[RMDB]
RNA sequence: GGGAACGACUCGAGUAGAGUCGAAAAGGAUGGCACGCGGCCCCUCGGGGUCGUGGGGUAUGGUUAUCAAGACAUACUCAACACAUAAUUUUUGUCGAGAGGAAGCAGUUGGCUACCUGCGUACCGGCAAGCGUUAUUGUUUCGACAAUAACGCUUGAAAAGAAACAACAACAACAAC
Reactivity to DMS in 0.01 (KOAc 150mM, MgCl2 10mM, bicine 150mM(pH8.5), 24C), signal-to-noise 7, nucleotides 027 to 126: g000g020a100u010g010g000c070a150c030g010c010g010g020c000c000c010c010u040c300g020g000g030g030u000c030g020u000g000g000g000g000u010a010u000g000g010u010u040a150u040c250a130a130g010a060c010a030u000a040c000u000c020a090a120c300a090c120a080u050a060a070u010u010u000u000u010g020u010c040g000a180g000a080g000g010a100a120g000c030a040g000u010u010g000g000c020u000a040c130c010u000g010c050g010u020a180c010c020g010g000
Reactivity to 2A3 in 0.01 (KOAc 150mM, MgCl2 10mM, bicine 150mM(pH8.5), 24C), signal-to-noise 9, nucleotides 027 to 126: g070g040a090u100g030g000c020a010c020g010c000g000g010c000c000c000c010u070c140g040g000g000g000u000c010g000u010g000g010g000g000u000a010u030g040g040u140u120a180u300c110a110a040g070a030c000a000u020a010c000u010c020a080a070c060a000c020a110u160a180a220u140u110u090u100u160g080u070c060g020a050g010a040g130g020a060a020g000c030a030g020u080u060g070g000c010u010a050c010c000u000g000c030g020u050a040c010c000g000g010